Chemical mapping of a 177-nucleotide RNA with DMS and 2A3. The data come from the RNA Mapping Database (RMDB), library OK2TST. The RNA was probed in 150 mM KOAc, 10 mM MgCl2 and 150 mM bicine (pH 8.5) at 24 C. In probing experiments dimethyl sulfate is read out at A N1 and C N3, which are open when not base-paired. DMS adducts were read by reverse transcription with MarathonRT.
RNA sequence: GGGAACGACUCGAGUAGAGUCGAAAAGGGAGCCGCCACCUCGAGACGUCUUCCCGCCGUCCCCGGCUCCAGGAGACCCCACGGCCUUCUCUCAGCUCCUUGGCCUACUGCCGUGGCCUUGGUGCCCCUUUCGACUAGAUUUCGAUCUAGUCGAAAGAAAAGAAACAACAACAACAAC
Reactivity to DMS in 0.01 (KOAc 150mM, MgCl2 10mM, bicine 150mM(pH8.5), 24C), signal-to-noise 3, nucleotides 027 to 126: g000g010g020a070g040c060c030g030c140c050a090c080c030u000c060g010a070g000a080c040g000u000c060u010u000c000c010c020g030c290c050g000u000c010c020c020c050g030g010c010u000c020c020a110g010g000a140g010a120c060c030c020c040a080c090g020g020c020c030u000u000c030u000c030u000c050a140g000c020u000c000c010u000u000g000g010c010c010u010a070c090u010g000c090c060g000u000g020g010c010c010u000u000g000g010u000g000c030c070c080
Reactivity to 2A3 in 0.01 (KOAc 150mM, MgCl2 10mM, bicine 150mM(pH8.5), 24C), signal-to-noise 1, nucleotides 027 to 126: g080g000g010a020g030c030c020g050c060c040a080c010c050u060c030g090a070g000a040c010g030u000c050u080u030c010c010c010g000c010c020g030u060c020c020c010c000g020g000c000u000c000c000a010g060g030a060g040a080c020c040c000c010a000c030g050g020c020c000u070u060c020u020c000u000c010a020g010c010u010c000c000u020u050g030g000c020c010u050a080c040u150g100c030c050g050u030g010g000c000c000u010u030g040g020u040g000c000c010c010
Notes: For DMS, 4,297 sequencing reads were counted.